[RMDB]
RNA sequence: GGGAACGACUCGAGUAGAGUCGAAAACAGACCGUCCUCGCCGGCUGACUUCCACCCGUCGUCAGCGAGACGAGUAGCCAUCUCCCCGACAGGGUCACCCGGGCCGUUGUGCGACCGGAUCGAGUCCGGGAACACCUUGGACCGCGAGCCGGGACCGAAGGUCCUUUUCAUUCGUGAAAAGGACCUUAAAAGAAACAACAACAACAAC
Reactivity to DMS in 0.01 (KOAc 150mM, MgCl2 10mM, bicine 150mM(pH8.5), 24C), signal-to-noise 1, nucleotides 027 to 156: c030a140g020a050c050c010g000u000c060c000u000c040g030c050c030g000g000c000u040g020a010c020u010u010c080c100a250c000c100c090g000u000c060g030u000c000a060g020c000g000a070g010a030c000g000a110g030u000a070g020c080c000a140u010c040u010c000c010c020c000g010a080c070a190g000g030g000u010c010a100c040c040c030g000g030g010c050c040g030u000u000g010u000g040c030g010a300c010c000g030g000a060u000c170g000a250g020u000c000c000g030g010g020a140a080c040a030c020c050u010u010g010g000a020c060c010g010c040g000a090g020c000c030g000g040g000a130c020c020g000
Reactivity to 2A3 in 0.01 (KOAc 150mM, MgCl2 10mM, bicine 150mM(pH8.5), 24C), signal-to-noise 1, nucleotides 027 to 156: c060a060g080a030c000c000g040u030c000c070u020c000g000c010c000g010g020c080u210g010a000c000u260u110c090c040a070c080c110c090g020u000c000g020u050c040a020g000c000g020a030g030a010c000g000a030g020u050a010g060c040c020a110u080c040u080c120c010c000c000g070a030c040a080g000g000g080u070c040a130c040c030c000g210g060g000c030c000g080u080u080g000u030g030c000g010a040c000c010g000g040a020u070c190g050a020g130u000c020c000g000g000g000a040a040c040a030c010c030u080u070g020g010a050c000c080g020c050g030a030g000c020c020g040g010g010a040c010c010g020
Chemical mapping of a 207-nucleotide RNA with DMS and 2A3.
For 2A3, 746 sequencing reads were counted.
Conditions: 150 mM KOAc, 10 mM MgCl2 and 150 mM bicine (pH 8.5), 24 C.
Values cover nucleotides 27 to 156.
The data come from the RNA Mapping Database (RMDB), library OK3TST.